[RMDB]
RNA sequence: GGGAACGACUCGAGUAGAGUCGAAAAGAAAAUGGAUGGUGCCCAAGUCAGUGUGUCUCCCUUACAGUCUGCCAUCGAUGUGGCAGCCAAGGCAGAGCAUCGUUGUGUAGAAAGGGCAUGGACAACAGCUGAUCGUGUUGGGAUUGAUCCCGGCUUGCGUUAGAGACGUGUUCGCACGUCUCUAACGAAAAGAAACAACAACAACAAC
Reactivity to DMS in 0.01 (KOAc 150mM, MgCl2 10mM, bicine 150mM(pH8.5), 24C), signal-to-noise 2, nucleotides 027 to 156: g040a040a040a090a110u000g010g010a020u000g030g000u020g030c010c020c050a040a090g010u000c020a030g040u020g030u000g020u010c040u000c000c000c030u020u010a130c030a110g010u000c000u000g010c000c000a040u010c020g020a100u000g020u000g040g040c070a130g040c010c050a050a030g110g020c040a060g010a300g010c010a040u010c050g070u010u000g020u020g030u000a020g030a070a100a100g010g000g050c300a040u000g010g010a060c020a060a050c020a060g000c020u000g020a050u000c090g040u000g030u000u000g010g020g020a150u010u000g000a070u000c020c000c000g000g030c050u000u000g020
Reactivity to 2A3 in 0.01 (KOAc 150mM, MgCl2 10mM, bicine 150mM(pH8.5), 24C), signal-to-noise 2, nucleotides 027 to 156: g070a020a030a000a070u140g030g030a050u120g010g040u160g030c020c000c000a000a000g000u010c000a010g000u000g020u010g060u110c100u180c060c020c000u030u100a080c020a150g070u010c000u000g000c000c000a020u000c020g000a060u100g030u010g020g160c070a010g000c040c020a080a030g160g000c000a030g010a010g210c000a000u000c000g000u020u070g000u040g010u150a010g050a050a040a000g010g000g030c120a040u150g040g030a000c020a030a010c010a080g050c000u040g000a040u080c060g030u100g090u110u060g020g000g000a030u040u250g090a060u010c000c000c030g010g050c010u030u090g000
Conditions: 150 mM KOAc, 10 mM MgCl2 and 150 mM bicine (pH 8.5), 24 C. An RNA of 207 nucleotides, treated with DMS and 2A3 and read out base by base. For DMS the reverse transcriptase was MarathonRT. For 2A3 the reverse transcriptase was SuperScript II with manganese. It was measured as part of the RMDB library PDB130.